[RMDB]
RNA sequence: GGGAACGACUCGAGUAGAGUCGAAAAGGAAAACGUAAAACCUUCGUAAACACCACGCUCGGUGAGACGUGGGAGGCGAAAAUUGGCGAACGUCCGGAUGCUGAAGUGAUGGCAGAGCGGAAAGAGCGACAGGCUAUCUGUUCGCAGAUAGCCUGUCAAAAGAAACAACAACAACAAC
Reactivity to DMS in 0.01 (KOAc 150mM, MgCl2 10mM, bicine 150mM(pH8.5), 24C), signal-to-noise 2, nucleotides 027 to 126: g020g010a110a040a150a150c060g040u010a060a030a170a090c030c010u010u000c050g000u010a120a130a170c120a280c000c020a010c000g030c050u010c000g000g030u030g020a100g000a060c010g010u010g000g030g010a080g010g010c000g000a050a020a060a100u000u000g000g000c020g030a090a050c100g020u000c050c030g010g010a070u010g010c070u050g010a080a120g010u000g000a110u020g000g000c010a080g030a130g030c060g010g000a040a040a070g020a070g000c110